[RMDB]
RNA sequence: GGGAACGACUCGAGUAGAGUCGAAAAAUAGUGUUAUUCGUAACACUAUAUAUCCGAACUCAAGGAUUCGUUCCAGUGACAUGCAUGCUAGCAUGAAAGCAACUGAACAAGCGUUCGCGCUUGUUAAAUCUAUGUCAUAGUUCGCUAUGACAUAGAUAAAAGAAACAACAACAACAAC
Reactivity to 2A3 in 0.01 (KOAc 150mM, MgCl2 10mM, bicine 150mM(pH8.5), 24C), signal-to-noise 9, nucleotides 027 to 126: a000u010a000g000u000g010u010u000a030u040u060c220g040u030a010a000c000a000c010u000a000u000a000u000a000u010c060c030g020a180a070c010u010c020a040a060g140g000a030u020u000c000g000u010u000c000c010a010g060u040g090a030c000a010u010g040c000a010u150g200c050u120a070g000c010a010u020g040a080a010a000g060c030a030a090c070u160g050a010a000c050a010a000g010c000g020u060u100c230g000c000g010c080u000u000g000u000u020a020a090
Reactivity to DMS in 0.01 (KOAc 150mM, MgCl2 10mM, bicine 150mM(pH8.5), 24C), signal-to-noise 9, nucleotides 027 to 126: a010u000a000g010u000g010u000u000a020u000u010c170g020u000a000a000c000a010c000u000a000u000a040u010a120u000c120c020g000a090a050c000u000c010a080a180g010g010a030u000u000c000g010u000u000c000c000a100g010u000g010a260c020a010u000g010c010a130u010g020c220u000a120g010c010a010u000g000a060a100a080g010c090a060a080c140u010g000a030a020c000a010a010g000c000g020u000u010c230g020c020g010c000u000u000g000u000u000a020a090
About this RNA:
This 177-nucleotide RNA was probed chemically with 2A3 and DMS. Source: RMDB library M2PK50, as collected in RNAgym. The RNA was probed in 150 mM KOAc, 10 mM MgCl2 and 150 mM bicine (pH 8.5) at 24 C. For 2A3 the reverse transcriptase was SuperScript II with manganese. The DMS profile rests on 29,652 reads.